[RMDB]
RNA sequence: GGGAACGACUCGAGUAGAGUCGAAAACAGCAGUCUGGCGGCGGUUAGAUAGACAAGGUUAACAGCUAGAAUAAUUCAUUUAAGAUGGCACACUUCAAGCGUGAAAGAUCGCUGACAAAAGUGCCCGCAUAGUUAUUAUCUUCGGAUAAUAACUAUGAAAAGAAACAACAACAACAAC
Reactivity to 2A3 in 0.01 (KOAc 150mM, MgCl2 10mM, bicine 150mM(pH8.5), 24C), signal-to-noise 3, nucleotides 027 to 126: c010a010g090c020a020g070u010c020u040g030g000c020g000g040c040g010g020u040u050a010g020a120u060a030g080a060c040a090a040g050g030u070u080a060a010c020a050g020c030u050a030g080a070a050u130a120a080u100u070c040a060u070u190u140a050a020g030a050u120g000g000c010a010c000a000c000u070u060c060a120a000g000c010g010u020g010a020a020a000g090a040u280c000g000c010u000g010a000c040a000a140a010a030g000u010g000c000c020c020g000
Reactivity to DMS in 0.01 (KOAc 150mM, MgCl2 10mM, bicine 150mM(pH8.5), 24C), signal-to-noise 6, nucleotides 027 to 126: c070a100g020c090a090g000u000c030u010g020g020c060g000g010c070g000g010u000u000a040g010a120u000a070g020a100c170a060a110g010g000u000u000a060a070c070a080g000c030u000a070g020a070a100u010a100a100u000u010c080a060u010u000u010a040a060g010a100u000g010g020c010a030c030a100c140u000u000c140a080a040g020c010g020u000g000a110a130a200g000a110u010c010g030c000u000g000a100c210a040a020a130a140g010u000g000c020c010c270g030